[RMDB]
The record gives the reactivity of an RNA of 177 nucleotides to 2A3 and DMS. For 2A3, 1,503 sequencing reads were counted. Conditions: 150 mM KOAc, 10 mM MgCl2 and 150 mM bicine (pH 8.5), 24 C. 2A3 is a SHAPE reagent: it acylates the 2'-hydroxyl of flexible nucleotides of all four kinds. The data come from the RNA Mapping Database (RMDB), library OK2TST.

RNA sequence: GGGAACGACUCGAGUAGAGUCGAAAAAGUAAGUGUUGUCACAAACGCACUUAGAUUGAAAAAGAUGCGAUUAGAACCACGCCGUAAAGAUGCCUAGAUUCCUUAAUAAUGAAGGAUUCGUUGGUGAAUGUGUUACGGAUUUCGAUCCGUAACACAUAAAAGAAACAACAACAACAAC
Reactivity to 2A3 in 0.01 (KOAc 150mM, MgCl2 10mM, bicine 150mM(pH8.5), 24C), signal-to-noise 3, nucleotides 027 to 126: a000g100u070a040a000g030u050g060u140u160g000u040c010a030c060a130a060a020c070g000c000a000c000u010u010a040g070a240u140u300g100a100a060a000a020a040g130a120u090g010c000g000a040u090u070a060g020a090a030c030c010a060c040g020c000c000g020u050a100a000a050g090a080u220g000c000c000u000a000g000a000u010u050c000c000u060u080a020a110u190a190a060u280g120a040a030g020g000a000u050u050c040g020u170u160g000g010u010g080a030
Reactivity to DMS in 0.01 (KOAc 150mM, MgCl2 10mM, bicine 150mM(pH8.5), 24C), signal-to-noise 3, nucleotides 027 to 126: a060g020u000a030a020g040u000g010u020u040g040u010c080a100c280a120a090a070c030g000c010a000c010u000u000a040g000a180u000u010g000a070a050a090a080a090g010a090u000g000c030g010a070u000u000a070g010a120a130c060c040a070c040g000c020c100g010u010a050a090a120g000a110u000g000c000c010u010a100g010a030u000u000c000c000u000u000a030a140u030a080a110u010g000a040a030g010g000a020u000u000c000g030u000u000g020g000u000g010a120